[RMDB]
RNA sequence: GGGAACGACUCGAGUAGAGUCGAAAAGAUAUGGAUCGGAGAUGGAGGCAGACAACAGCUCGGAAACGAGACAUGUCUGGCUCCGGAAUUGAUCCUAAGUCAAAAGGAUGAGGUUCGCCUCAUCCAAUCAAUUUAGACUGUUCGCAGUCUAAAUUGAAAAAGAAACAACAACAACAAC
Reactivity to 2A3 in 0.01 (KOAc 150mM, MgCl2 10mM, bicine 150mM(pH8.5), 24C), signal-to-noise 5, nucleotides 027 to 126: g030a000u080a030u180g010g000a000u000c030g040g040a080g000a040u090g010g010a000g040g130c010a000g010a010c010a140a030c050a080g010c000u010c000g010g020a060a070a030c000g010a010g030a040c040a100u100g000u000c000u000g020g040c010u000c000c000g000g000a000a000u010u020g000a000u000c000c010u020a190a030g060u040c040a020a000a050a210g020g000a000u010g000a000g030g030u050u130c280g150c030c000u000c000a000u000c000c000a000a010
Reactivity to DMS in 0.01 (KOAc 150mM, MgCl2 10mM, bicine 150mM(pH8.5), 24C), signal-to-noise 9, nucleotides 027 to 126: g010a050u000a300u010g000g010a010u000c000g010g020a080g000a300u020g000g000a020g010g010c000a010g000a020c010a030a070c240a170g000c010u000c000g010g000a110a080a190c010g000a010g000a040c070a150u000g000u000c000u000g000g000c010u000c000c000g000g000a190a090u000u000g000a010u000c000c000u000a050a120g000u010c030a070a090a150a100g000g000a010u000g000a010g000g010u000u020c270g010c000c000u000c000a000u000c000c000a020a040
The data come from the RNA Mapping Database (RMDB), library TTRDEL. This 177-nucleotide RNA was probed chemically with 2A3 and DMS. The reactions ran in a buffer of 150 mM KOAc, 10 mM MgCl2 and 150 mM bicine (pH 8.5), at 24 C. For 2A3, 18,174 sequencing reads were counted. Reactivities are rounded to 0.1 and cut off at 0 and 3.